[RMDB]
RNA sequence: GGGAACGACUCGAGUAGAGUCGAAAAGUUUCACUGAGCAUGUUUUCGCGCUGAUGCAUCUGCUUGGAUUCGCUUUUGCGCCAAGGAUCCGGGAUCUUCAUGACAAGCGGCUGUUUAUUCAUGGAAAGAUCACCUCAGGAUUCGUCCUGAGGUGAUCAAAAGAAACAACAACAACAAC
Reactivity to 2A3 in 0.01 (KOAc 150mM, MgCl2 10mM, bicine 150mM(pH8.5), 24C), signal-to-noise 4, nucleotides 027 to 126: g020u010u020u020c040a070c080u140g010a070g050c060a070u070g060u030u070u040u070c040g000c010g000c050u050g030a080u110g000c040a030u010c020u090g090c020u070u100g030g030a100u080u080c000g020c070u070u170u150u280g060c050g040c060c010a040a090g030g020a020u020c010c000g000g000g010a020u000c030u090u030c030a050u100g040a060c040a060a010g000c010g050g000c030u030g090u040u060u110a080u110u080c070a050u110g050g010a060a070a040
Reactivity to DMS in 0.01 (KOAc 150mM, MgCl2 10mM, bicine 150mM(pH8.5), 24C), signal-to-noise 2, nucleotides 027 to 126: g010u000u020u020c060a160c100u020g020a160g000c120a040u030g000u000u000u000u020c070g050c100g020c110u060g050a110u000g000c060a020u010c110u000g020c000u000u000g000g000a210u040u000c090g040c040u010u010u000u010g070c010g010c030c060a030a050g010g000a100u000c010c040g000g000g000a070u030c020u000u000c020a090u000g000a070c060a070a060g000c040g000g010c050u020g020u000u020u060a120u040u010c070a020u060g020g000a060a100a050